[RMDB]
RNA sequence: GGGAACGACUCGAGUAGAGUCGAAAAGAAACCGCAAAAGGCUCAUUAUAUCAGUUAUGGUUCCUUAGAUCGUUAACAGUUACUUGGAUAAUUGUGGUAAUUCUAGAGCUUAUACAUGCAAUUAAAAGUGAAUAGCUACUUUCGAGUAGCUAUUCACAAAAGAAACAACAACAACAAC
Reactivity to DMS in 0.01 (KOAc 150mM, MgCl2 10mM, bicine 150mM(pH8.5), 24C), signal-to-noise 4, nucleotides 027 to 126: g000a060a130a120c040c050g000c140a060a090a130a080g000g010c000u010c020a090u020u030a090u010a070u010c080a040g010u020u020a060u020g010g020u000u010c050c050u030u010a110g000a030u030c120g000u030u020a110a080c060a050g010u010u000a000c040u040u010g000g000a130u000a060a060u000u000g000u000g000g000u010a020a140u020u000c040u010a020g010a070g000c040u010u000a070u020a080c220a070u010g000c090a090a060u020u040a060a050a060a070
Reactivity to 2A3 in 0.01 (KOAc 150mM, MgCl2 10mM, bicine 150mM(pH8.5), 24C), signal-to-noise 5, nucleotides 027 to 126: g040a040a010a010c020c020g000c040a080a020a000a010g050g000c030u010c050a060u060u170a090u040a050u110c040a030g030u070u080a070u150g090g040u080u140c000c000u070u090a100g020a140u110c050g070u070u170a050a040c020a050g010u040u050a070c030u110u150g080g010a100u100a080a030u070u040g020u040g040g060u040a050a090u070u010c030u060a070g010a010g010c000u060u060a040u040a050c110a040u130g060c020a000a180u150u140a130a130a040a020